[RMDB]
Chemical mapping of a 170-nucleotide RNA with 2A3 and DMS.
As a SHAPE reagent, 2A3 marks flexible, mostly unpaired nucleotides at the ribose 2'-OH.
For DMS the reverse transcriptase was MarathonRT.
For DMS, 8,041 sequencing reads were counted.
Conditions: 150 mM KOAc, 10 mM MgCl2 and 150 mM bicine (pH 8.5), 24 C.

RNA sequence: GGGAACGACUCGAGUAGAGUCGAAAAGGCCCCUUCCGAAGUGACGGGGGGGGGUCACUAGGAACACUGGGGUCCAGUGGAUCCGUGGGACUACCCUCUCCACCCUCCCAACACACUCCUUCCCCCCAUGCAUCCCGCUUCGGCGGGAUGAAAAGAAACAACAACAACAAC
Reactivity to 2A3 in 0.01 (KOAc 150mM, MgCl2 10mM, bicine 150mM(pH8.5), 24C), signal-to-noise 2, nucleotides 027 to 129: g020g040c000c000c000c000u060u020c000c010g070a130a020g010u030g100a030c040g000g000g000g000g000g000g000g040g000u020c020a020c040u030a070g020g020a030a030c050a030c150u050g010g020g030g100u060c010c000a040g020u050g030g020a110u020c030c040g020u180g000g000g020a000c020u280a300c020c010c030u030c000u000c010c000a080c030c000c000u050c000c000c000a070a000c110a000c030a020c050u080c000c000u090u170c000c000c000c010c000c010a010u030g030
Reactivity to DMS in 0.01 (KOAc 150mM, MgCl2 10mM, bicine 150mM(pH8.5), 24C), signal-to-noise 3, nucleotides 027 to 129: g030g030c040c000c000c020u000u000c020c020g050a220a120g070u060g000a120c170g040g030g000g040g050g000g050g070g050u010c010a030c030u000a220g000g000a020a040c150a040c060u040g030g000g050g050u050c000c050a060g060u030g000g000a090u050c040c150g000u020g030g000g000a120c040u030a190c040c000c000u030c000u010c000c000a190c030c010c000u030c020c040c070a060a080c190a030c150a000c130u050c020c010u000u030c020c020c010c080c040c020a020u040g020